[RMDB]
RNA sequence: GGGAACGACUCGAGUAGAGUCGAAAACUAUUGUGGUUCGCCACAAUAGGCAGGGCUGUUUUUCUCGCUGACUUUCAGCCCCAAACAAAAAAGACAGCAUAAUUGUACUGCGCUUCGGCGCAGUAAAUAUCUUCCUGAGAUUCGUCUCAGGAAGAUAAAAAGAAACAACAACAACAAC
Reactivity to DMS in 0.01 (KOAc 150mM, MgCl2 10mM, bicine 150mM(pH8.5), 24C), signal-to-noise 3, nucleotides 027 to 126: c000u000a010u000u000g010u010g000g030u000u010c220g020c000c000a020c000a010a000u010a000g000g000c230a130g000g020g020c000u010g000u000u000u000u000u000c090u000c290g010c000u010g010a100c010u010u000u000c000a010g000c000c010c000c200a020a010a220c040a000a010a010a000a020a040g030a090c010a010g020c000a080u010a070a080u010u010g010u000a010c010u000g000c010g010c010u000u020c180g010g010c000g010c000a020g020u000a000a080a120
Reactivity to 2A3 in 0.01 (KOAc 150mM, MgCl2 10mM, bicine 150mM(pH8.5), 24C), signal-to-noise 1, nucleotides 027 to 126: c000u000a000u010u000g000u000g010g070u040u050c200g050c050c000a000c000a000a000u000a000g000g000c080a050g000g020g000c000u000g030u020u000u000u010u010c130u090c070g000c010u010g000a030c000u020u000u020c010a010g020c010c000c020c030a000a020a020c010a000a000a000a000a000a000g010a010c000a010g040c000a000u070a000a020u050u110g040u040a000c010u010g010c010g000c020u020u050c210g100g040c000g000c010a000g010u000a000a000a000

An RNA of 177 nucleotides, treated with DMS and 2A3 and read out base by base. For DMS the reverse transcriptase was MarathonRT. Conditions: 150 mM KOAc, 10 mM MgCl2 and 150 mM bicine (pH 8.5), 24 C. It was measured as part of the RMDB library M2PK50. For 2A3 the reverse transcriptase was SuperScript II with manganese. The 2A3 profile rests on 2,956 reads.